Record summary
An RNA of 177 nucleotides, treated with DMS and 2A3 and read out base by base. The RNA was probed in 150 mM KOAc, 10 mM MgCl2 and 150 mM bicine (pH 8.5) at 24 C. The data come from the RNA Mapping Database (RMDB), library OK1LIB.

[RMDB]
RNA sequence: GGGAACGACUCGAGUAGAGUCGAAAACAUUGUUGAAAGGACGGUCGGUGACUUUUUCCCAAAUAACAUGAUUUACCACGAGCUACAGCGACGGUACGUGGUUCCGUCGAGUGGGGCGAUAGCGACCCGUACCUGGAGCUUUCGAGCUCCAGGUACGAAAAGAAACAACAACAACAAC
Reactivity to DMS in 0.01 (KOAc 150mM, MgCl2 10mM, bicine 150mM(pH8.5), 24C), signal-to-noise 2, nucleotides 027 to 126: c030a300u000u040g000u000u000g020a060a140a180g000g000a120c080g000g000u000c010g000g000u000g000a150c050u000u000u000u000u000c000c000c000a160a040a120u030a150a030c150a070u000g000a110u000u050u020a090c040c070a100c210g000a050g040c020u000a070c070a070g020c030g000a050c080g000g000u000a000c080g060u070g000g040u000u040c050c000g010u000c030g020a050g010u030g000g000g000g000c100g040a000u000a070g000c070g000a080c090c050
Reactivity to 2A3 in 0.01 (KOAc 150mM, MgCl2 10mM, bicine 150mM(pH8.5), 24C), signal-to-noise 2, nucleotides 027 to 126: c050a070u040u100g040u000u010g130a130a100a020g030g030a040c000g070g000u010c000g000g060u000g070a100c010u050u070u010u000u060c020c000c000a040a250a050u210a050a040c130a050u170g060a180u190u180u170a090c000c000a030c070g150a080g010c000u080a070c080a070g060c000g020a040c090g000g060u020a050c120g240u140g110g000u150u080c010c030g020u000c000g000a020g000u070g000g030g000g040c040g070a090u030a050g080c030g000a050c010c000